The data come from the RNA Mapping Database (RMDB), library M2RFPK. Structure probing data (DMS and 2A3) for a 207-nucleotide construct. DMS (dimethyl sulfate) methylates the pairing face of unpaired adenines and cytosines. 2A3 is a SHAPE reagent: it acylates the 2'-hydroxyl of flexible nucleotides of all four kinds. The DMS profile rests on 3,571 reads. The 2A3 profile rests on 1,358 reads.
RNA sequence: GGGAACGACUCGAGUAGAGUCGAAAAUAACACUGGCGGCUGCGUAUCACUCUAGGGUACGAGAUAGUGCGAUAUAAGAAGCACUGGUACAUGCCGGCAGGGACAGUUAAGAGAUGGCCGCAGUCUCAAAAGGGGUCAUUCUUCGGAAUGACCCCAAGUUAACUAGAGGGUUCGCCCUCUAGUUAACAAAAGAAACAACAACAACAAC
Reactivity to DMS in 0.01 (KOAc 150mM, MgCl2 10mM, bicine 150mM(pH8.5), 24C), signal-to-noise 2, nucleotides 027 to 156: u000a090a140c020a050c010u010g020g020c000g000g010c020u030g040c020g000u000a020u000c010a140c070u000c150u010a170g020g020g040u010a040c000g000a110g050a150u010a030g030u000g000c020g050a110u010a160u010a110a190g010a160a210g030c000a010c020u000g000g040u000a100c070a130u000g020c000c000g000g000c050a050g010g020g020a050c070a100g020u000u000a070a110g020a050g030a040u000g030g020c070c050g020c090a200g000u000c020u000c020a070a030a130a220g010g040g040g020u010c000a010u000u020c020u000u010c300g030g000a060a030u000g000a040c000c000c000c000a020a010
Reactivity to 2A3 in 0.01 (KOAc 150mM, MgCl2 10mM, bicine 150mM(pH8.5), 24C), signal-to-noise 1, nucleotides 027 to 156: u070a010a020c020a000c030u040g220g010c000g000g010c020u080g020c030g030u010a000u010c030a060c190u090c080u100a170g120g010g000u020a010c020g010a000g010a120u150a030g000u030g010c010g020a010u060a030u040a300a080g090a080a010g010c000a000c010u010g000g010u090a060c010a030u120g000c000c000g040g000c000a000g000g050g020a030c030a110g020u030u050a080a000g010a000g010a010u020g030g000c030c010g080c080a010g020u000c000u010c040a070a060a010a000g000g000g000g000u000c000a010u000u020c000u010u010c180g090g000a020a020u000g000a000c010c000c000c000a020a000